[RMDB]
Chemical mapping of a 177-nucleotide RNA with 2A3 and DMS. DMS adducts were read by reverse transcription with MarathonRT.
RNA sequence: GGGAACGACUCGAGUAGAGUCGAAAAGGACAGGUGCAUCAGCCUGUUAUUACGGUUAAUCAGUGCGCCCAGUUCUGUUACCGGCAGGAUGGCAAUCACCUCCCGAUUACCGUCAGGGUACAGGGCGCCAAUAUACCACGUUCGCGUGGUAUAUUGGAAAAGAAACAACAACAACAAC
Reactivity to 2A3 in 0.01 (KOAc 150mM, MgCl2 10mM, bicine 150mM(pH8.5), 24C), signal-to-noise 3, nucleotides 027 to 126: g110g020a020c020a000g000g020u060g080c080a230u120c030a170g010c000c010u010g030u010u010a080u090u120a020c020g010g000u060u150a100a060u130c080a030g060u030g070c000g020c010c010c010a010g020u040u010c010u010g070u060u060a040c000c000g030g000c030a030g030g050a030u040g010g000c040a030a030u040c010a060c040c050u080c010c010c010g030a030u040u040a030c010c010g010u020c040a040g120g000g000u040a020c030a060g000g000g020c000g000
Reactivity to DMS in 0.01 (KOAc 150mM, MgCl2 10mM, bicine 150mM(pH8.5), 24C), signal-to-noise 9, nucleotides 027 to 126: g010g010a030c050a020g010g020u000g010c200a130u010c250a220g010c000c000u000g010u000u000a040u010u010a090c080g010g000u000u000a080a080u010c130a070g020u000g010c020g010c010c000c020a140g000u000u010c050u000g000u010u000a050c030c010g010g020c080a070g010g000a010u000g000g010c040a020a020u000c010a090c120c070u010c040c030c020g000a040u000u000a030c010c000g010u000c030a150g000g010g010u000a020c050a080g000g000g010c020g010
Annotation
For 2A3 the reverse transcriptase was SuperScript II with manganese. The RNA was probed in 150 mM KOAc, 10 mM MgCl2 and 150 mM bicine (pH 8.5) at 24 C. Reactivities are given for positions 27 through 126. The data come from the RNA Mapping Database (RMDB), library OK2TST. The 2A3 profile rests on 9,650 reads.